[RMDB]
RNA sequence: GGGAACGACUCGAGUAGAGUCGAAAAGGGCAAAGUGUUUCGGUCGAGUGCAACUGUGGCUCAGCAAUCUCUGAGACUAUCAACACGGCCAAAACCUAUUCUCAGUGCACCAAGACUGCUCAGUGCCGUAUACUCUCUAAUUCGUUAGAGAGUAUACAAAAGAAACAACAACAACAAC
Reactivity to DMS in 0.01 (KOAc 150mM, MgCl2 10mM, bicine 150mM(pH8.5), 24C), signal-to-noise 9, nucleotides 027 to 126: g010g000g020c040a100a100a070g020u010g010u000u000u000c070g020g010u000c020g010a130g030u000g010c110a070a120c190u000g010u000g000g010c010u000c010a020g000c300a100a110u010c210u010c010u000g000a040g010a100c070u000a060u010c100a070a060c050a080c040g010g000c010c020a030a020a040a050c020c050u000a100u000u000c030u000c030a110g010u000g000c030a040c030c070a070a100g010a090c130u000g000c020u000c050a100g010u000g000c040c110
Reactivity to 2A3 in 0.01 (KOAc 150mM, MgCl2 10mM, bicine 150mM(pH8.5), 24C), signal-to-noise 9, nucleotides 027 to 126: g030g000g000c060a070a060a050g080u120g020u090u020u040c030g010g000u010c030g060a090g070u040g030c060a180a070c070u050g020u030g070g000c000u000c010a010g000c050a110a240u070c100u000c000u120g030a030g040a280c010u050a040u200c020a050a240c010a010c030g010g000c000c000a010a020a000a010c030c010u060a120u140u020c040u010c030a060g040u120g070c010a020c020c010a040a040g080a080c040u040g010c010u020c030a030g030u020g060c010c010